[RMDB]
Annotation: An RNA of 177 nucleotides, treated with 2A3 and read out base by base.
RNA sequence: GGGAACGACUCGAGUAGAGUCGAAAACGAAAGGGAUUCCCGUCGGGGGCGCUGCUCAACCGAAGAUGAGAUCCGGCCUUGGGAAGGGGAUGGCCCGCGCGAGGAGGAAGUGCGAGGGGCAUCUCCGCGCAUAACUGAGCUUCGGCUCAGUUAUGCGAAAAGAAACAACAACAACAAC
Reactivity to 2A3 in 0.01 (KOAc 150mM, MgCl2 10mM, bicine 150mM(pH8.5), 24C), signal-to-noise 1, nucleotides 027 to 126: c010g050a130a040a000g070g000g040a100u030u040c010c000c010g030u060c000g010g010g000g000g020c070g010c120u150g020c000u000c030a060a050c070c020g060a030a010g040a080u090g000a010g000a040u050c020c040g020g020c040c040u120u090g070g000g070a100a090g030g000g010g040a000u040g080g100c000c000c030g030c020g000c030g030a110g110g050a100g110g080a110a030g020u070g080c020g000a030g020g020g010g000c000a000u010c020u000c020c000g000

The 2A3 profile rests on 1,360 reads.
The reactions ran in a buffer of 150 mM KOAc, 10 mM MgCl2 and 150 mM bicine (pH 8.5), at 24 C.
For 2A3 the reverse transcriptase was SuperScript II with manganese.